[RMDB]
Description:
Structure probing data (2A3 and DMS) for a 177-nucleotide construct. The data come from the RNA Mapping Database (RMDB), library OK2TST. For DMS the reverse transcriptase was MarathonRT. The RNA was probed in 150 mM KOAc, 10 mM MgCl2 and 150 mM bicine (pH 8.5) at 24 C. Reactivities are given for positions 27 through 126.
RNA sequence: GGGAACGACUCGAGUAGAGUCGAAAAACAGGUAAGCCAUAUCAGGAUAUUUAAGUGACUUGGAUACCUCUUCAUUGUCAUUCUCAAUACUCUAUUCUAGAUGCUACAAGCUCUAUUAAGAGCUUUGCUAAGUGCUAGGGUUCGCCCUAGCACUUAGAAAAGAAACAACAACAACAAC
Reactivity to 2A3 in 0.01 (KOAc 150mM, MgCl2 10mM, bicine 150mM(pH8.5), 24C), signal-to-noise 1, nucleotides 027 to 126: a000c030a050g020g000u090a240a030g040c000c010a010u010a020u000c040a000g180g060a070u110a120u290u270u150a190a060g030u000g040a010c000u000u010g080g000a010u050a070c000c010u000c060u090u080c020a090u000u150g110u110c030a070u060u060c000u000c000a050a080u130a100c070u020c010u040a150u090u040c020u020a030g010a090u160g040c030u080a090c010a080a010g000c000u040c000u010a100u090u160a120a040g000a030g060c000u040u020u040g060
Reactivity to DMS in 0.01 (KOAc 150mM, MgCl2 10mM, bicine 150mM(pH8.5), 24C), signal-to-noise 1, nucleotides 027 to 126: a070c190a030g020g000u020a060a130g000c030c050a000u000a030u000c020a080g000g000a160u000a100u020u010u070a110a200g020u000g000a030c090u000u010g000g030a100u000a020c040c000u000c090u010u000c130a130u000u020g000u000c080a060u000u000c020u000c060a060a070u000a130c060u020c000u010a070u000u000c080u000a020g000a030u000g000c020u020a110c200a020a100g000c000u000c010u000a090u000u000a060a050g000a020g000c010u000u000u000g020